[RMDB]
RNA sequence: GGGAACGACUCGAGUAGAGUCGAAAACAUGUCGAUUAACGACAAAAUGUGGGUGAUCUUUUUACUGUUUUUAAGCGCAAUCACCACCAUUGCAGGUAUGCGCUAUUGGCACACCCUUGCCAGCAUAAUCCCUGAUUAUAUUCGUAUAAUCAGGGAUAAAAGAAACAACAACAACAAC
Reactivity to 2A3 in 0.01 (KOAc 150mM, MgCl2 10mM, bicine 150mM(pH8.5), 24C), signal-to-noise 9, nucleotides 027 to 126: c050a060u070g010u010c010g040a100u180u260a210a240c020g010a010c010a010a110a010a020u170g010u060g030g000g020u040g080a130u100c110u050u170u090u100u170a140c070u050g150u080u040u020u050u170a070a010g000c010g000c020a030a060u140c030a040c030c000a010c020c040a190u070u250g080c130a040g010g030u040a030u040g000c010g010c010u020a070u040u080g000g000c010a010c000a020c020c000c000u000u020g000c000c000a010g010c020a060u100a130
Reactivity to DMS in 0.01 (KOAc 150mM, MgCl2 10mM, bicine 150mM(pH8.5), 24C), signal-to-noise 9, nucleotides 027 to 126: c120a120u000g010u000c020g020a300u010u010a110a140c020g010a020c010a060a060a080a060u010g010u000g010g010g010u000g010a050u010c020u010u010u010u010u010a090c180u000g010u000u000u000u000u010a060a060g010c170g010c080a070a040u000c090a020c020c010a060c070c130a090u010u010g020c180a080g000g010u000a050u000g010c000g010c040u000a100u010u000g000g000c010a030c080a080c030c010c020u000u000g010c000c010a090g010c180a060u010a090

Chemical mapping of a 177-nucleotide RNA with 2A3 and DMS. For 2A3 the reverse transcriptase was SuperScript II with manganese. For DMS, 41,162 sequencing reads were counted. It was measured as part of the RMDB library OK2TRN.